[RMDB]
RNA sequence: GGGAACGACUCGAGUAGAGUCGAAAAAGAAAGUCCUAUGAGACAGAGUACCCCAAGUGUAAGAACGAUGAUUGGGAUUUUGUCAUCACCACAGACAUAUCAGAAAUGGGAGCCAACUUCAAGGCGACGUCUCGUGUAUAUUCGUAUACACGAGACGAAAAGAAACAACAACAACAAC
Reactivity to DMS in 0.01 (KOAc 150mM, MgCl2 10mM, bicine 150mM(pH8.5), 24C), signal-to-noise 3, nucleotides 027 to 126: a090g000a070a090a180g000u000c010c010u000a140u000g000a140g010a060c010a070g020a110g000u000a080c150c000c010c040a040a100g040u000g000u020a160a220g010a100a130c140g000a070u020g000a140u000u030g010g020g000a100u000u000u000u000g020u000c020a100u000c000a100c120c130a070c230a050g000a060c030a070u010a130u020c050a070g010a070a050a080u070g010g010g000a110g000c010c000a040a060c120u000u000c080a080a100g000g000c060g000a170
Reactivity to 2A3 in 0.01 (KOAc 150mM, MgCl2 10mM, bicine 150mM(pH8.5), 24C), signal-to-noise 2, nucleotides 027 to 126: a010g110a040a050a010g040u040c000c000u060a080u090g080a050g000a020c010a000g050a010g050u210a210c000c000c000c020a080a110g010u030g020u180a120a190g030a130a030c080g020a100u130g010a080u060u090g000g000g100a080u050u110u000u050g070u000c050a090u000c010a070c060c000a030c020a030g080a050c030a030u150a030u090c030a020g160a110a090a060u120g050g010g030a010g020c020c000a010a030c020u090u070c060a070a040g010g000c010g020a020

This 177-nucleotide RNA was probed chemically with DMS and 2A3. 2A3 adducts were read by reverse transcription with SuperScript II with manganese. Values cover nucleotides 27 to 126. The DMS profile rests on 1,319 reads.